The record gives the reactivity of an RNA of 177 nucleotides to 2A3 and DMS.
[RMDB]
RNA sequence: GGGAACGACUCGAGUAGAGUCGAAAAAUUGAUGCGAAGGGCGGACGGAGAAGGCUAUGUUGGCCGGGCGACGGUUGUCCCGGUUUAAGCGUGUAGGCUGGUUUUCCAGGCAAAUCCGGAAAUUGAAAUACUAUAGCGAUUUCGAUCGCUAUAGUAUAAAAGAAACAACAACAACAAC
Reactivity to 2A3 in 0.01 (KOAc 150mM, MgCl2 10mM, bicine 150mM(pH8.5), 24C), signal-to-noise 1, nucleotides 027 to 126: a000u080u100g010a040u030g020c020g040a050a000g000g030g000c050g000g020a010c040g010g030a030g000a110a000g060g000c060u060a060u210g110u110u120g090g000c070c000g030g000g020c040g020a120c050g070g000u070u120g050u030c010c000c000g010g000u020u090u010a050a000g030c000g010u050g040u060a020g020g080c020u030g030g000u140u010u110u020c010c020a020g070g000c000a040a060a060u010c040c020g080g040a010a070a090u090u110g060a180a150
Reactivity to DMS in 0.01 (KOAc 150mM, MgCl2 10mM, bicine 150mM(pH8.5), 24C), signal-to-noise 5, nucleotides 027 to 126: a090u000u000g010a080u000g010c060g020a100a090g010g000g020c030g010g010a060c080g010g010a070g010a100a090g010g010c040u000a060u010g010u010u000g000g010c020c010g000g010g000c300g000a070c140g020g010u020u010g000u010c020c010c000g000g020u000u000u010a040a070g010c040g010u000g010u000a060g010g000c020u010g010g010u000u000u000u000c010c020a110g000g000c080a040a060a100u000c020c030g010g010a060a060a090u000u000g010a100a090
For 2A3, 1,571 sequencing reads were counted. Source: RMDB library M2PK90, as collected in RNAgym. For 2A3 the reverse transcriptase was SuperScript II with manganese. The RNA was probed in 150 mM KOAc, 10 mM MgCl2 and 150 mM bicine (pH 8.5) at 24 C.